[RMDB]
RNA sequence: GGGAACGACUCGAGUAGAGUCGAAAACUGAGUAGGGUGAAGCCAGGGGAAACUCUGGUGGAAGCUCGUAGCGAUUCUGACGUGCAAAUCGAUCGUCAAACUUGGGUAUAGGGGCGAAAGACUAAUCCAGAUACCCAGACUUCGGUCUGGGUAUCUGAAAAGAAACAACAACAACAAC
Reactivity to DMS in 0.01 (KOAc 150mM, MgCl2 10mM, bicine 150mM(pH8.5), 24C), signal-to-noise 1, nucleotides 027 to 126: c030u000g000a100g020u000a160g000g010g060u000g000a300a180g000c030c000a000g000g000g000g000a060a030a170c040u000c000u000g030g000u000g000g000a090a100g000c000u010c010g000u080a060g000c030g000a060u000u000c010u020g080a090c000g010u000g080c100a060a070a060u030c030g000a060u000c050g000u000c100a030a040a140c000u020u000g000g030g000u000a100u000a090g020g080g010g000c180g040a080a070a100g000a030c090u040a050a050u130c090
Reactivity to 2A3 in 0.01 (KOAc 150mM, MgCl2 10mM, bicine 150mM(pH8.5), 24C), signal-to-noise 1, nucleotides 027 to 126: c060u110g040a030g100u060a100g030g000g000u190g040a000a000g030c000c000a000g000g000g000g010a000a110a040c000u040c000u000g000g000u000g010g000a020a020g000c000u000c000g000u000a000g000c110g090a000u060u000c020u160g070a000c000g040u090g070c180a000a000a090u040c040g020a080u030c000g070u030c090a000a190a190c070u140u030g110g000g000u080a060u060a120g000g000g000g010c020g090a090a010a000g040a040c100u040a060a030u070c090